[RMDB]
RNA sequence: GGGAACGACUCGAGUAGAGUCGAAAAGGGGUCGGAGGAAUCCCUUGGAUUUAAUAGACUUUUGACGUGCUGAAGCCUCCACGGCACGAUAAGUCUAUUUGUCAGGGAUUACCUCCGACGGAGGCACCCAAAAGCUUCAGUCUUCGGACUGAAGCAACAUUUGUGAUAUGUUCGCAUAUCACAAAUGAAAAGAAACAACAACAACAAC
Reactivity to DMS in 0.01 (KOAc 150mM, MgCl2 10mM, bicine 150mM(pH8.5), 24C), signal-to-noise 1, nucleotides 027 to 156: g000g020g050g010u010c020g050g010a070g030g000a140a020u000c000c000c030u000u000g030g000a030u000u000u000a030a000u010a020g010a020c000u000u010u000u000g010a160c060g030u000g050c020u000g000a050a120g020c020c010u020c000c070a300c040g000g020c000a010c020g000a110u000a040a030g000u000c000u000a000u000u000u010g000u010c090a070g000g020g000a060u000u000a070c000c010u000c000c000g040a000c000g010g000a060g060g050c000a120c070c020c000a080a090a080a170g020c000u010u000c010a020g020u000c000u000u070c300g050g010a020c000u010g000a030a010g030c010a020a020
Reactivity to 2A3 in 0.01 (KOAc 150mM, MgCl2 10mM, bicine 150mM(pH8.5), 24C), signal-to-noise 4, nucleotides 027 to 156: g080g010g010g000u010c000g000g000a000g000g000a010a010u010c010c010c020u050u100g160g000a110u240u270u170a030a000u020a010g000a000c020u040u100u100u280g190a080c030g000u000g000c000u040g040a190a060g030c010c030u030c020c010a030c010g010g000c010a000c010g040a050u060a030a020g000u000c000u010a020u020u030u090g080u060c060a050g000g000g000a000u000u030a200c000c000u000c010c000g000a000c010g010g000a010g000g000c010a040c000c010c020a060a120a000a020g000c000u000u000c000a000g000u000c000u030u170c280g100g000a000c000u000g010a000a000g000c000a000a000